This 170-nucleotide RNA was probed chemically with DMS and 2A3. The DMS profile rests on 5,836 reads. The reactions ran in a buffer of 150 mM KOAc, 10 mM MgCl2 and 150 mM bicine (pH 8.5), at 24 C. For 2A3 the reverse transcriptase was SuperScript II with manganese.
[RMDB]
RNA sequence: GGGAACGACUCGAGUAGAGUCGAAAACCGUUCGGGAAAAGGGGGACUCCGGAACUCCCUGCAGGUUGGGCACGAAGCCCCCACCGGGCGCUCCCCUCGGCAGACCGCCCAUUGGGUUCACACCCCCGUUUUUUCGGGUUCGCCCGAAAAAAAAGAAACAACAACAACAAC
Reactivity to DMS in 0.01 (KOAc 150mM, MgCl2 10mM, bicine 150mM(pH8.5), 24C), signal-to-noise 1, nucleotides 027 to 129: c070c040g020u020u060c080g040g020g000a020a020a070a190g020g000g000g030g020a000c060u010c060c020g020g020a160a050c000u000c030c080c060u000g020c160a060g000g050u050u080g020g000g000c150a150c000g020a140a170g000c000c010c000c020c070a100c040c070g000g000g050c040g020c120u010c000c000c010c130u050c100g070g000c150a090g040a130c140c090g020c020c020c040a190u060u060g000g120g010u020u050c120a000c140a160c060c040c000c030c000g040u010u010
Reactivity to 2A3 in 0.01 (KOAc 150mM, MgCl2 10mM, bicine 150mM(pH8.5), 24C), signal-to-noise 2, nucleotides 027 to 129: c030c010g020u010u000c020g010g020g080a060a050a020a040g000g030g010g000g020a040c010u020c030c020g030g020a030a060c030u060c000c000c000u000g010c030a010g030g060u120u130g030g030g000c080a010c120g090a060a010g000c000c000c000c000c000a010c010c000g000g020g000c030g000c010u060c040c000c010c010u020c010g000g000c020a010g030a060c010c050g000c000c000c000a040u100u120g000g000g000u200u100c010a000c000a000c020c000c000c000c000g000u000u000